[RMDB]
RNA sequence: GGGAACGACUCGAGUAGAGUCGAAAAGAUAUGGACGAUGGGCGAGGAUCAUAAGGGUCGGAAACGACCCUAUGGGAGCCUAAGUCCUAAGUCAAAACUUGCCAAAGCGUUCGCGCUUUGGCAAGAAUCAGAUGUAAAUCUUCGGAUUUACAUCUGAAAAAGAAACAACAACAACAAC
Reactivity to 2A3 in 0.01 (KOAc 150mM, MgCl2 10mM, bicine 150mM(pH8.5), 24C), signal-to-noise 1, nucleotides 027 to 126: g000a040u050a030u120g000g000a000c010g060a250u300g000g000g010c070g060a300g120g030a100u060c010a030u120a200a300g020g000g020u000c000g030g040a050a000a000c000g000a000c030c040c000u020a000u000g000g010g040a010g010c000c030u020a050a010g010u000c020c000u030a060a030g000u000c040a050a000a090a220c020u020u000g000c000c000a000a000a000g050c020g040u110u260c300g060c020g000c070u000u030u060g040g020c000a010a000g010a000a000
Reactivity to DMS in 0.01 (KOAc 150mM, MgCl2 10mM, bicine 150mM(pH8.5), 24C), signal-to-noise 3, nucleotides 027 to 126: g020a040u000a300u010g010g010a030c010g010a220u010g000g000g020c000g020a090g030g010a050u000c000a010u010a080a090g010g010g000u010c000g020g000a070a060a150c010g000a020c000c000c000u000a010u000g010g010g000a090g030c000c000u000a050a250g000u000c000c000u020a040a090g000u000c030a120a090a080a150c010u000u010g000c000c020a010a010a010g000c000g020u000u040c270g010c040g010c000u000u000u000g010g010c000a000a000g000a050a090
An RNA of 177 nucleotides, treated with 2A3 and DMS and read out base by base. For DMS, 2,497 sequencing reads were counted. It was measured as part of the RMDB library TTRDEL.